Source: RMDB library RFM100, as collected in RNAgym. The record gives the reactivity of an RNA of 177 nucleotides to DMS and 2A3. For DMS the reverse transcriptase was MarathonRT. Reactivities are given for positions 27 through 126. For 2A3, 2,426 sequencing reads were counted. Conditions: 150 mM KOAc, 10 mM MgCl2 and 150 mM bicine (pH 8.5), 24 C.
[RMDB]
RNA sequence: GGGAACGACUCGAGUAGAGUCGAAAAUGGAGAGGCGUCCUCAGCGACGGACCGGGCCCAAGUUCCCUGGAAAGGGACGCCUGGGAGGGUGAGAGCCCCGUCCGGCCCGGACCCUGCCGCACCACGACCGUACACACAACUUCGGUUGUGUGUACGGAAAAGAAACAACAACAACAAC
Reactivity to DMS in 0.01 (KOAc 150mM, MgCl2 10mM, bicine 150mM(pH8.5), 24C), signal-to-noise 1, nucleotides 027 to 126: u000g000g000a060g000a070g020g030c060g010u000c010c000u000c050a270g000c050g000a050c060g000g000a040c010c120g040g010g000c000c050c090a010a130g000u040u000c000c000c000u000g000g080a180a050a010g000g000g000a010c060g000c000c130u000g000g000g010a300g000g000g000u000g000a110g050a100g000c000c000c010c000g000u030c000c020g000g010c000c120c030g000g000a060c030c020c010u030g080c030c040g000c030a210c000c010a040c180g000a230
Reactivity to 2A3 in 0.01 (KOAc 150mM, MgCl2 10mM, bicine 150mM(pH8.5), 24C), signal-to-noise 2, nucleotides 027 to 126: u160g030g020a100g020a040g080g010c050g020u040c000c010u120c080a040g000c020g080a050c030g000g000a000c000c020g010g030g000c010c000c030a010a010g040u060u030c000c000c010u000g070g090a160a060a050g010g000g000a000c010g020c000c000u030g020g050g010a080g010g000g000u010g010a090g010a010g020c000c000c000c000g040u020c000c000g010g010c000c030c010g030g000a020c020c010c000u040g020c000c010g000c000a030c020c020a040c020g050a010